Chemical mapping of a 177-nucleotide RNA with 2A3 and DMS. For 2A3, 1,603 sequencing reads were counted. The reactions ran in a buffer of 150 mM KOAc, 10 mM MgCl2 and 150 mM bicine (pH 8.5), at 24 C.
[RMDB]
RNA sequence: GGGAACGACUCGAGUAGAGUCGAAAACUACGUUAGAAGACAUUAAAUCAAUCCAAGGGGCGAAAGCAAGAGCUGCAUCCGAGUCCAAGAUUGUUGUUAAUGACACGGAGAAAGCAUGGGAGGUAUACACUGGAUACCGUUUCGACGGUAUCCAGUGAAAAGAAACAACAACAACAAC
Reactivity to 2A3 in 0.01 (KOAc 150mM, MgCl2 10mM, bicine 150mM(pH8.5), 24C), signal-to-noise 3, nucleotides 027 to 126: c020u130a040c040g120u050u060a050g000a150a010g080a070c030a030u030u150a080a040a090u200c040a000a040u060c050c080a050a100g010g000g020g030c030g050a140a010a010g020c030a060a030g030a010g110c000u050g020c020a010u030c060c050g000a030g040u010c050c000a010a010g060a180u000u010g000u030u010g020u010u080a110a070u110g010a000c000a010c030g000g000a020g030a050a040a010g000c020a030u080g020g000g000a090g020g030u050a100u040a070
Reactivity to DMS in 0.01 (KOAc 150mM, MgCl2 10mM, bicine 150mM(pH8.5), 24C), signal-to-noise 2, nucleotides 027 to 126: c060u030a010c050g020u000u000a110g000a120a010g010a060c020a040u040u030a030a080a030u020c100a020a040u020c050c050a060a100g000g000g000g010c050g020a060a080a040g000c070a120a100g020a120g010c030u000g020c110a040u000c060c020g000a070g010u030c010c140a110a050g000a060u000u020g000u020u000g020u000u030a070a090u000g010a090c090a030c010g000g000a050g020a050a110a100g030c040a050u000g020g000g010a040g000g010u010a040u020a090